[RMDB]
This 177-nucleotide RNA was probed chemically with 2A3 and DMS.
RNA sequence: GGGAACGACUCGAGUAGAGUCGAAAAGGAGGAAGUCCGACGAGAUCGCGGCUGGGGCUUAGGACCCCACUCCUGCGAGACAGGAGUAAUCCUAAACAGGGUUUUCACCCUUCCUUUAGUUUCCUUCUCUUAGUUAACUGUUCGCAGUUAACUAAGAAAAAGAAACAACAACAACAAC
Reactivity to 2A3 in 0.01 (KOAc 150mM, MgCl2 10mM, bicine 150mM(pH8.5), 24C), signal-to-noise 3, nucleotides 027 to 126: g030g010a010g030g020a030a010g050u010c010c010g010a060c020g110a160g070a210u100c050g000c030g010g000c030u020g030g000g010g000c010u060u060a040g100g070a210c000c010c000c010a010c010u000c000c000u000g010c020g200a190g030a050c000a000g020g000a010g000u020a010a040u010c010c000u010a020a020a010c090a040g000g030g020u060u070u200u240c100a090c000c000c000u020u020c020c010u050u080u040a030g010u020u010u010c010c000u050u000c020
Reactivity to DMS in 0.01 (KOAc 150mM, MgCl2 10mM, bicine 150mM(pH8.5), 24C), signal-to-noise 4, nucleotides 027 to 126: g010g010a040g000g010a080a090g010u000c010c010g000a100c100g020a210g000a150u000c050g020c070g000g000c200u000g000g020g000g000c050u000u010a070g020g010a140c000c010c020c060a030c010u000c020c000u000g010c020g000a120g010a220c020a040g000g000a020g010u000a080a090u000c010c010u000a020a040a120c230a080g010g000g000u000u000u010u000c140a120c010c000c000u000u000c020c010u000u000u000a120g010u000u000u000c000c020u000u000c070